Notes
Source: RMDB library M2PK50, as collected in RNAgym. Structure probing data (2A3 and DMS) for a 177-nucleotide construct. The DMS profile rests on 3,604 reads. For DMS the reverse transcriptase was MarathonRT.
[RMDB]
RNA sequence: GGGAACGACUCGAGUAGAGUCGAAAACGAGAUGAGUUCGCUCAUCUCGAAAGAACCGCGGGCGUGACUCGGUCAGAGCAUGACAGGCGCUGCGGUCACGAAAAAGUGGUGUGUUCGCACACCACAAGUUUGCUAAAUUGUUCGCAAUUUAGCAAACAAAAGAAACAACAACAACAAC
Reactivity to 2A3 in 0.01 (KOAc 150mM, MgCl2 10mM, bicine 150mM(pH8.5), 24C), signal-to-noise 2, nucleotides 027 to 126: c000g000a000g010a010u010g000a000g040u040u140c170g070c000u000c000a010u020c010u000c000g000a010a020a010g030a050a010c000c000g000c070g080g040g040c020g030u060g120a140c030u060c230g080g000u040c050a030g030a070g170c170a130u070g050a040c010a020g050g000c020g000c020u020g000c000g010g000u010c020a070c050g190a140a030a010a020a030g000u000g010g010u000g000u000g020u000u070c160g030c090a010c010a000c020c000a000c010a000a010
Reactivity to DMS in 0.01 (KOAc 150mM, MgCl2 10mM, bicine 150mM(pH8.5), 24C), signal-to-noise 3, nucleotides 027 to 126: c020g000a000g000a000u000g000a010g020u000u010c240g020c000u000c000a010u000c000u000c000g010a040a060a090g010a110a050c000c000g000c000g000g020g010c010g020u000g000a110c080u000c120g030g030u010c040a030g000a130g010c140a090u000g010a060c110a120g000g000c010g010c010u010g010c000g000g020u000c030a030c120g010a040a050a050a120a120g000u010g000g020u000g010u000g020u010u010c210g010c000a000c000a000c000c000a000c000a030a050